[RMDB]
RNA sequence: GGGAACGACUCGAGUAGAGUCGAAAAGUAAAGAUCGCUCUUUUACUCGGCAUGAUACCACAGUUAUCGGGUCAACAGAGUAGUUGCAAAUGACAACAAUGCUCAGGGUUAUGCUCUCGCUGCCUAAAAAAUCGUUUAACGUUCGCGUUAAACGAAACACACCGCAUGGGUUCGCCCAUGCGGUGUGAAAAGAAACAACAACAACAAC
Reactivity to 2A3 in 0.01 (KOAc 150mM, MgCl2 10mM, bicine 150mM(pH8.5), 24C), signal-to-noise 1, nucleotides 027 to 156: g120u050a000a000a120g090a060u090c000g010c070u020c000u070u160u110u050a030c010u000c020g140g000c090a030u120g040a070u090a070c000c000a070c000a120g000u010u030a130u070c010g030g010g000u030c000a000a000c010a040g040a040g010u020a000g000u000u000g000c010a040a220a280u170g020a160c000a020a000c000a020a210u170g060c020u130c130a020g010g000g010u030u080a000u090g000c000u000c000u000c010g030c000u040g020c040c090u090a030a030a000a000a040a180u000c000g000u000u000u000a000a000c000g020u000u050c300g000c000g080u000u000a000a000a000c000g000a010a000a000